Source: RMDB library OK2TRN, as collected in RNAgym.
Chemical mapping of a 177-nucleotide RNA with 2A3 and DMS.
In probing experiments dimethyl sulfate is read out at A N1 and C N3, which are open when not base-paired.
The reactions ran in a buffer of 150 mM KOAc, 10 mM MgCl2 and 150 mM bicine (pH 8.5), at 24 C.
DMS adducts were read by reverse transcription with MarathonRT.
Values are in units of 0.01, from 0 to 300, in steps of 10.
RNA sequence: GGGAACGACUCGAGUAGAGUCGAAAAAACAAUCUUAGACGUUCAUUCUCCACAAUCUCAACAUUUACAAGCAGCAAAAGUUGUAUAAAAGUUGGAGACUUUUCCAAUAUCAAGACUGAAAUUAAUACCAUAAACAGGUAUUCGUACCUGUUUAUGGAAAAGAAACAACAACAACAAC
Reactivity to 2A3 in 0.01 (KOAc 150mM, MgCl2 10mM, bicine 150mM(pH8.5), 24C), signal-to-noise 3, nucleotides 027 to 126: a000a000c090a070a010u120c050u110u140a110g040a080c030g040u010u010c060a040u070u010c020u000c030c000a020c020a030a080u060c020u000c050a010a080c010a020u000u030u090a060c020a080a100g070c040a020g040c020a060a000a010a260g010u030u020g040u060a070u070a090a070a030a010g060u120u040g020g010a030g040a060c020u080u080u070u000c030c010a050a070u070a030u180c050a030a040g090a120c040u100g020a130a010a000u100u090a080a070u140a210
Reactivity to DMS in 0.01 (KOAc 150mM, MgCl2 10mM, bicine 150mM(pH8.5), 24C), signal-to-noise 3, nucleotides 027 to 126: a070a080c040a050a080u010c050u000u000a120g020a050c130g020u000u000c080a120u000u000c030u000c000c010a030c110a100a110u000c120u010c010a040a020c050a060u000u000u000a050c080a090a090g020c130a050g010c090a070a060a040a090g010u000u000g010u010a070u010a040a040a080a130g010u010u000g030g000a050g010a050c250u000u000u000u000c080c060a060a040u000a040u000c050a020a060g000a050c060u010g000a060a050a090u000u010a050a100u000a130